[RMDB]
RNA sequence: GGGAACGACUCGAGUAGAGUCGAAAAAGUGCACUAGGUACGCCUAGUGCACAUUCCAGGACAUACUGCUGAGGAUGUCAAAAAUGCAGUUGGAGUCCUCAACUGAAUAGGCUACGGCCUAUCCAGAAAAAGACUUGGUUGUUCGCAACCAAGUCAACCUGUUAAGAUCGUUCGCGAUCUUAACAGGAAAAGAAACAACAACAACAAC
Reactivity to 2A3 in 0.01 (KOAc 150mM, MgCl2 10mM, bicine 150mM(pH8.5), 24C), signal-to-noise 1, nucleotides 027 to 156: a000g010u000g000c000a000c000u000a000g000g000u040a050c190g080c030c000u000a000g000u010g030c000a000c000a000u020u000c010c010a010g000g000a000c000a040u160a020c030u050g040c010u040g030a100g190g050a240u240g300u300c220a030a080a010a010a000u150g010c010a010g000u040u070g090g050a100g000u000c000c000u020c040a060a130c000u000g000a020a010u000a010g000g020c010u010a020c280g090g000c000c000u000a000u000c000c010a020g130a070a050a010a020a000g000a000c000u000u010g010g020u000u020g010u040u060c200g000c070a020a000c010c010a000a000g000u000c000a000a000
Reactivity to DMS in 0.01 (KOAc 150mM, MgCl2 10mM, bicine 150mM(pH8.5), 24C), signal-to-noise 1, nucleotides 027 to 156: a120g040u000g000c030a020c000u000a030g000g050u020a150c300g080c000c020u000a030g000u000g010c000a010c000a010u000u000c010c000a200g000g020a080c040a040u000a030c020u010g010c010u010g030a160g000g020a090u000g010u000c050a010a070a020a140a130u010g030c050a070g000u000u010g020g000a160g020u000c010c010u000c010a070a190c010u000g000a000a020u000a000g020g050c030u010a170c300g120g000c010c000u000a000u000c010c000a040g010a020a030a100a170a160g010a030c000u000u000g000g010u000u010g020u000u010c280g030c060a010a070c000c000a010a020g000u000c000a000a040
Structure probing data (2A3 and DMS) for a 207-nucleotide construct. DMS adducts were read by reverse transcription with MarathonRT. 2A3 adducts were read by reverse transcription with SuperScript II with manganese. Values are in units of 0.01, from 0 to 300, in steps of 10. The RNA was probed in 150 mM KOAc, 10 mM MgCl2 and 150 mM bicine (pH 8.5) at 24 C. It was measured as part of the RMDB library M2RFPK.